[RMDB]
RNA sequence: GGGAACGACUCGAGUAGAGUCGAAAAUAACUUAAUUUGCCGGAGACACAGUUGCCCAUCCCAGCGGCAAGUUGGAGAUAUGCGAGUGUAUCUCGAAUGUUGUGCAAAUGUUUUCGUUCGCCCCCACAAUCGUAAUAUUAUUCGUAAUAUUACGAUUAAAAGAAACAACAACAACAAC
Reactivity to DMS in 0.01 (KOAc 150mM, MgCl2 10mM, bicine 150mM(pH8.5), 24C), signal-to-noise 9, nucleotides 027 to 126: u030a060a080c110u020u030a050a020u010u000u010g010c010c020g020g000a060g010a070c110a040c060a040g010u010u000g010c010c080c060a070u000c010c010c010a090g000c030g000g020c100a040a060g010u010u000g000g000a050g010a030u010a050u010g010c060g010a060g020u010g020u000a060u010c010u000c000g000a080a070u020g000u010u000g000u010g010c040a020a020a060u010g000u010u000u010u010c040g010u010u010c040g010c020c000c000c010c030a100c200
Reactivity to 2A3 in 0.01 (KOAc 150mM, MgCl2 10mM, bicine 150mM(pH8.5), 24C), signal-to-noise 9, nucleotides 027 to 126: u140a010a020c050u080u170a040a030u050u020u020g020c010c020g110g010a060g020a020c030a010c020a160g110u080u060g030c020c010c010a030u030c010c010c000a010g020c010g060g060c120a060a040g010u010u030g090g010a140g010a040u060a010u070g050c090g030a050g060u110g000u040a050u010c010u010c020g060a140a120u220g020u140u050g020u050g030c020a030a040a070u070g050u050u060u020u070c030g010u030u040c040g080c010c000c000c020c000a040c050
This 177-nucleotide RNA was probed chemically with DMS and 2A3. Conditions: 150 mM KOAc, 10 mM MgCl2 and 150 mM bicine (pH 8.5), 24 C. For 2A3 the reverse transcriptase was SuperScript II with manganese. Values cover nucleotides 27 to 126. For DMS, 60,157 sequencing reads were counted.